[RMDB]
RNA sequence: GGGAACGACUCGAGUAGAGUCGAAAAGGGAUUUUCUAAGUGAACAAAGAUAUGGAUGUUUGGGAAAGCAUCCACUUUGAGAAUUUACCAUAGAUAGCUGGCGUUAAGUUGUAAUGUAGUAUAAAUCGAUACGUAAUUCGUUCGCGAAUUACGUAUCAAAAGAAACAACAACAACAAC
Reactivity to 2A3 in 0.01 (KOAc 150mM, MgCl2 10mM, bicine 150mM(pH8.5), 24C), signal-to-noise 2, nucleotides 027 to 126: g050g000g010a020u050u020u050u030c050u080a090a090g040u030g120a070a060c040a040a090a020g060a100u160a050u300g010g010a010u000g040u040u030u050g120g030g010a040a130a010g000c000a000u000c000c000a010c000u000u000u010g050a060g020a010a030u070u060u070a100c000c010a030u030a050g030a040u040a040g040c090u040g050g000c030g020u050u050a080a060g010u040u080g020u020a080a100u100g020u010a010g030u010a080u090a190a070a020u130c040
Reactivity to DMS in 0.01 (KOAc 150mM, MgCl2 10mM, bicine 150mM(pH8.5), 24C), signal-to-noise 2, nucleotides 027 to 126: g010g000g020a110u010u000u000u000c030u000a100a100g010u000g010a200a300c030a030a030a030g020a190u010a110u010g000g020a010u000g010u000u000u030g000g030g000a160a020a040g010c000a000u000c000c000a040c010u000u010u000g000a020g000a140a050u000u000u000a080c010c020a090u010a080g010a070u000a060g030c030u010g010g000c080g000u010u000a080a090g010u010u000g010u010a050a090u010g010u000a080g010u010a090u000a050a100a060u000c110
Structure probing data (2A3 and DMS) for a 177-nucleotide construct. The data come from the RNA Mapping Database (RMDB), library RFMREP. For 2A3, 1,425 sequencing reads were counted. The DMS profile rests on 1,688 reads. For 2A3 the reverse transcriptase was SuperScript II with manganese.